[RMDB]
RNA sequence: GGGAACGACUCGAGUAGAGUCGAAAAGAACAUUUCUACCACUAAUCACACCAGGAGUUUAAGGAGGCUUUCCUGGAUUUCUCCGAGAAGAUUUUACGCUCAAUCUUGGGACGACAGACAGCCUAAAAGUGAUUUUACCAUUCGUGGUAAAAUCACUAAAAGAAACAACAACAACAAC
Reactivity to DMS in 0.01 (KOAc 150mM, MgCl2 10mM, bicine 150mM(pH8.5), 24C), signal-to-noise 2, nucleotides 027 to 126: g030a130a210c120a070u000u010u030c020u000a070c010c010a050c010u010a060a050u020c070a090c120a070c090c060a090g000g000a080g030u030u010u040a070a050g030g000a090g000g000c030u010u030u010c060c020u000g010g010a040u020u010u000c020u020c040c000g030a120g000a060a080g040a020u020u020u020u000a050c160g030c040u040c050a020a010u000c050u000u000g000g000g000a100c100g000a060c080a050g000a070c120a040g000c070c000u000a040a020a180
Reactivity to 2A3 in 0.01 (KOAc 150mM, MgCl2 10mM, bicine 150mM(pH8.5), 24C), signal-to-noise 5, nucleotides 027 to 126: g040a050a030c110a150u050u070u030c020u080a110c010c010a010c010u030a100a100u080c020a040c010a030c070c000a030g010g060a110g050u040u220u130a120a110g130g040a060g060g020c010u070u070u020c020c000u010g000g020a000u030u080u000c040u000c000c020g050a050g010a110a000g000a010u020u060u080u250a140c130g030c050u040c050a080a120u000c040u020u030g000g020g010a020c050g000a010c000a010g060a010c000a000g010c000c010u100a100a120a030